Structure probing data (2A3 and DMS) for a 177-nucleotide construct.
RNA sequence: GGGAACGACUCGAGUAGAGUCGAAAAGCAACAGAUGGUAGAAAUAUUUACUCCAGUGAUUUUUCCAUCAAAGUUUCUAUCAGCAUUUGAAUCUCAGCAGUGUGGCUGUUAAGAAGCCGUCAAACUCAAAUCACGCAUAGUUCGCUAUGCGUGAUUUAAAAGAAACAACAACAACAAC
Reactivity to 2A3 in 0.01 (KOAc 150mM, MgCl2 10mM, bicine 150mM(pH8.5), 24C), signal-to-noise 4, nucleotides 027 to 126: g020c030a010a060c010a060g070a080u040g000g080u100a030g060a020a040a010u160a160u090u270u150a130c080u140c110c030a070g050u030g100a070u000u030u020u100u060c040c000a000u040c030a160a030a000g010u010u010u010c010u000a030u060c030a010g080c030a080u020u060u180g100a110a090u020c020u010c030a050g000c040a030g050u050g000u040g210g000c010u030g050u060u030a140a090g060a050a020g040c010c030g080u040c040a080a070a080c020u040c110
Reactivity to DMS in 0.01 (KOAc 150mM, MgCl2 10mM, bicine 150mM(pH8.5), 24C), signal-to-noise 3, nucleotides 027 to 126: g000c050a050a100c160a110g010a080u000g000g020u000a020g000a000a020a020u050a050u030u020u030a050c060u010c120c060a070g040u000g010a020u000u010u030u000u020c060c020a150u040c120a060a060a080g020u000u010u010c010u020a030u010c000a020g000c050a070u000u010u000g000a070a090u000c020u000c010a080g020c170a070g020u010g050u010g000g010c020u000g000u030u060a090a240g020a070a040g000c010c040g030u010c060a050a060a080c070u030c100
For DMS, 3,302 sequencing reads were counted. The reactions ran in a buffer of 150 mM KOAc, 10 mM MgCl2 and 150 mM bicine (pH 8.5), at 24 C.